[RMDB]
RNA sequence: GGGAACGACUCGAGUAGAGUCGAAAAAACGCAAAUUACGCUCCAGCUUACGCAAAAGUCGCGUAAGUUUAUCACACUUUUGGAGUCGGCUUAAGAACUUCUAAUCUAGCUAGAAUCUUUCAAGCUGUAAUCUUUGCUAGAUGCUCUUUUUGUCAUAGAAAUGUUUGAUGUUCGCAUCAAACAUUUCAAAAGAAACAACAACAACAAC
Reactivity to DMS in 0.01 (KOAc 150mM, MgCl2 10mM, bicine 150mM(pH8.5), 24C), signal-to-noise 1, nucleotides 027 to 156: a050a050c050g020c060a070a080a130u040u010a080c060g010c010u000c000c000a210g000c010u000u000a000c000g050c000a110a110a100a170g010u010c110g010c000g010u000a010a030g000u020u000u010a070u010c070a130c050a120c130u000u020u000u030g010g000a030g000u010c000g020g000c030u010u000a060a050g000a050a040c060u000u000c030u000a150a100u000c030u000a030g020c010u010a050g000a040a090u000c040u010u020u010c070a030a120g000c070u000g000u010a040a120u020c090u000u010u010g030c000u000a020g020a070u010g000c030u000c010u000u010u000u020u000g010u010c030a210u000a080
Reactivity to 2A3 in 0.01 (KOAc 150mM, MgCl2 10mM, bicine 150mM(pH8.5), 24C), signal-to-noise 4, nucleotides 027 to 156: a000a020c190g000c080a130a100a050u190u090a060c020g010c020u000c000c000a000g000c000u000u000a000c000g000c010a090a170a140a080g140u230c060g010c010g000u000a000a000g010u000u080u000a060u050c010a020c020a050c160u100u090u120u160g000g010a000g020u060c030g000g000c000u040u030a010a010g020a050a080c050u060u020c020u020a010a110u000c000u010a000g000c000u000a000g000a040a060u010c010u010u100u130c080a030a020g020c010u000g080u180a110a120u070c090u090u220u160g000c000u000a000g000a010u020g010c020u010c010u040u030u020u090u110g120u120c050a070u080a170